RNA sequence: GGGAACGACUCGAGUAGAGUCGAAAAGACAACCGUACUAACUUACCUGUUUCAGUGGCUUUCGAGCAUUACACUAACAGACACACUCGCUCACUACCAACUACACAGCUGUUGUCCGGCUUAGGCGUUACUGCCACCAGAAAUUUCACUGUGUGGGACACAACCACGGAUUCGUCCGUGGUUGUGUAAAAGAAACAACAACAACAAC
Reactivity to 2A3 in 0.01 (KOAc 150mM, MgCl2 10mM, bicine 150mM(pH8.5), 24C), signal-to-noise 1, nucleotides 027 to 156: g130a000c030a050a020c160c000g070u050a050c050u230a100a100c080u170u130a060c050c040u040g120u000u030u150c070a000g000u000g050g020c010u080u150u170c160g070a030g060c050a080u170u170a030c050a000c000u040a210a040c070a050g020a080c040a040c040a070c070u060c000g040c000u000c110a000c070u120a060c030c050a070a000c000u050a030c020a000c000a020g040c020u120g040u110u010g030u000c040c010g000g060c000u070u220a070g000g000c000g010u110u230a020c090u110g110c000c000a000c000c000a060g110a230a300a300u060u190u140c010a000c000u010g020u010g000u000g020g030g000